[RMDB]
RNA sequence: GGGAACGACUCGAGUAGAGUCGAAAACGAUACAGGCAACAACCCCCCAAGAGGCAAUGUCAAUGCCACCUUUGAUAUGCAAUCUCUAGUCAAUAAUUUAGACAAACUCACCCAACUCAUCGGCGAGAUUUUCUUCACGUUUCGACGUGAAGAAAAUAAAAGAAACAACAACAACAAC
Reactivity to DMS in 0.01 (KOAc 150mM, MgCl2 10mM, bicine 150mM(pH8.5), 24C), signal-to-noise 2, nucleotides 027 to 126: c120g000a150u010a120c130a080g050g010c010a090a050c090a070a270c000c000c020c010c010c030a090a040g020a080g020g020c010a020a030u000g020u000c090a050a080u000g000c080c020a050c120c050u010u000u000g000a060u000a040u010g010c030a110a090u000c040u000c020u020a100g000u000c050a090a080u020a060a110u010u010u020a090g010a040c050a030a070a130c060u000c010a060c000c020c020a100a070c100u000c060a030u020c080g000g030c080g000a100g000
The data come from the RNA Mapping Database (RMDB), library OK2TST. Chemical mapping of a 177-nucleotide RNA with DMS. The RNA was probed in 150 mM KOAc, 10 mM MgCl2 and 150 mM bicine (pH 8.5) at 24 C. Values are in units of 0.01, from 0 to 300, in steps of 10.